The record gives the reactivity of an RNA of 177 nucleotides to DMS and 2A3. The reactions ran in a buffer of 150 mM KOAc, 10 mM MgCl2 and 150 mM bicine (pH 8.5), at 24 C. The 2A3 profile rests on 2,072 reads.

[RMDB]
RNA sequence: GGGAACGACUCGAGUAGAGUCGAAAAGAUAUGGAAGCGAAUCUACCCACCCUCAGCAUCGGAAACGAUGUAGAGGAGGAAAUGUGCUUCCUAAGUCAAAACCAAUAAGACUUCGGUCUUAUUGGAACACGGGAAUUAGGUUCGCCUAAUUCCCGUGAAAAGAAACAACAACAACAAC
Reactivity to DMS in 0.01 (KOAc 150mM, MgCl2 10mM, bicine 150mM(pH8.5), 24C), signal-to-noise 2, nucleotides 027 to 126: g000a110u010a260u010g020g000a000a020g040c000g020a120a050u010c060u000a110c040c020c010a300c210c000c000u000c000a300g000c040a010u000c000g000g000a090a100a160c010g040a000u000g030u010a120g040a010g000g000a060g000g000a010a060a070u010g010u020g000c010u010u000c000c000u010a030a120g000u010c090a160a080a060a100c000c000a000a000u000a000a000g000a010c000u010u000c120g070g000u030c000u000u000a000u000u000g000g000a020a080
Reactivity to 2A3 in 0.01 (KOAc 150mM, MgCl2 10mM, bicine 150mM(pH8.5), 24C), signal-to-noise 1, nucleotides 027 to 126: g000a030u080a070u190g000g000a010a010g000c010g010a090a130u050c030u130a240c040c050c020a110c060c020c010u010c010a020g000c000a000u000c010g030g060a070a060a060c030g020a020u020g030u060a070g000a020g000g030a050g010g030a000a060a090u170g020u070g000c000u020u000c010c020u050a120a010g080u000c100a020a040a100a180c020c010a000a000u020a000a000g020a010c000u050u190c300g060g000u000c000u000u030a000u010u010g000g000a020a000
For DMS the reverse transcriptase was MarathonRT.